This 177-nucleotide RNA was probed chemically with DMS and 2A3. 2A3 is a SHAPE reagent: it acylates the 2'-hydroxyl of flexible nucleotides of all four kinds. Reactivities are given for positions 27 through 126. It was measured as part of the RMDB library OK2TST.
[RMDB]
RNA sequence: GGGAACGACUCGAGUAGAGUCGAAAAAUGUCCUUUGCAGGGACAUGGUAACCAUCAUUCUCAGCAAACUAACACAAGAACAGACAACCAAACACCACAUGUUCUCACUCAUAAGUGGGAGUUGAACACACUGAGACGAGUUCGCUCGUCUCAGUGUAAAAGAAACAACAACAACAAC
Reactivity to DMS in 0.01 (KOAc 150mM, MgCl2 10mM, bicine 150mM(pH8.5), 24C), signal-to-noise 1, nucleotides 027 to 126: a000u000g000u000c000c000u000u000u020g010c240a160g040g010g020a020c060a000u000g060g000u050a120a090c100c040a020u040c140a120u000u020c060u010c000a050g020c010a070a020a120c110u000a080a050c110a020c050a070a110g030a040a040c070a040g030a030c140a020a030c060c070a080a060a040c030a070c010c060a070c050a030u000g010u000u000c020u000c020a070c010u030c290a010u000a080a050g000u000g000g000g000a010g050u000u000g000a130a100c140
Reactivity to 2A3 in 0.01 (KOAc 150mM, MgCl2 10mM, bicine 150mM(pH8.5), 24C), signal-to-noise 1, nucleotides 027 to 126: a000u000g000u020c000c000u030u040u130g080c140a070g030g040g000a030c020a010u030g030g000u040a090a040c030c010a010u060c000a060u100u000c000u010c030a010g010c030a080a080a080c020u080a120a040c080a010c000a100a070g090a190a010c000a020g190a030c030a050a020c010c030a120a000a000c040a030c030c030a070c010a040u060g050u080u000c020u020c020a040c020u110c040a120u120a300a020g000u000g010g020g010a000g000u050u110g060a080a000c070